[RMDB]
RNA sequence: GGGAACGACUCGAGUAGAGUCGAAAAUGUUACCUAAGUACUGGUAACCCGGUGUUCGCGAGCUCCACCAGAGGUUUUCGAAACGCCGUCAUUUAUCUGGUUAGAAUUAGGGCCUUUUAACUCUCAAGGGAACUAAUUUGAAUUUUAAUGAGAGUCGGAACUACCAUAUCUUCGGAUAUGGUAGUUCAAAAGAAACAACAACAACAAC
Reactivity to 2A3 in 0.01 (KOAc 150mM, MgCl2 10mM, bicine 150mM(pH8.5), 24C), signal-to-noise 2, nucleotides 027 to 156: u090g010u010u000a010c020c000u130a300a130g150u130a240c150u060g010g000u000a000a010c000c000c030g000g000u010g010u000u010c030g000c040g000a020g010c000u020c010c070a000c000c000a000g000a000g000g000u000u000u000u090c000g000a000a060a130c020g020c010c010g150u140c080a080u220u300u230a060u030c000u020g000g000u020u000a010g020a000a000u000u000a010g020g010g000c000c000u070u170u050u140a110a030c000u000c000u000c000a010a010g020g000g010a010a000c000u000a000a000u010u000u000g000a020a040u090u110u150u300a160a090u080g000a000g000a000g000u010c060g080